[RMDB]
RNA sequence: GGGAACGACUCGAGUAGAGUCGAAAAAGCGUUGCUGAUUAUCAGCAGCGUACCGUUUGCGCUGGUGGGCGGCAUCUGGUUGCUGUGGUGGAUGGGCUUUCAUCUUUCCGUGGCGACGGGCACUGGCCGCCAUAGGGUCAUUCGUGACCCUAUGGCGAAAAGAAACAACAACAACAAC
Reactivity to 2A3 in 0.01 (KOAc 150mM, MgCl2 10mM, bicine 150mM(pH8.5), 24C), signal-to-noise 2, nucleotides 027 to 126: a050g010c010g010u020u020g000c010u000g030a220u150u270a170u300c010a010g000c000a000g000c000g000u010a010c000c010g020u010u090u100g070c080g000c030u060g030g000u030g000g050g040c030g020g020c030a090u040c090u140g170g000u020u020g020c020u020g010u010g000g010u010g010g020a040u010g020g060g110c020u060u270u150c030a010u000c000u060u200u050c010c000g010u010g030g000c010g020a010c000g000g010g050c040a030c050u030g050g020c030
Reactivity to DMS in 0.01 (KOAc 150mM, MgCl2 10mM, bicine 150mM(pH8.5), 24C), signal-to-noise 2, nucleotides 027 to 126: a090g010c000g020u000u000g010c010u010g020a300u010u010a150u020c000a010g010c010a010g000c010g010u000a100c030c020g010u000u000u010g020c110g010c070u020g010g000u010g020g000g010c020g010g000c060a080u010c060u030g010g020u000u000g010c020u000g040u010g020g020u000g000g000a030u000g010g010g010c230u020u010u010c020a040u000c010u010u010u010c020c010g020u000g020g020c010g010a020c020g000g000g040c170a040c070u000g010g000c050

This 177-nucleotide RNA was probed chemically with 2A3 and DMS. The reactions ran in a buffer of 150 mM KOAc, 10 mM MgCl2 and 150 mM bicine (pH 8.5), at 24 C. For 2A3, 2,578 sequencing reads were counted. DMS adducts were read by reverse transcription with MarathonRT.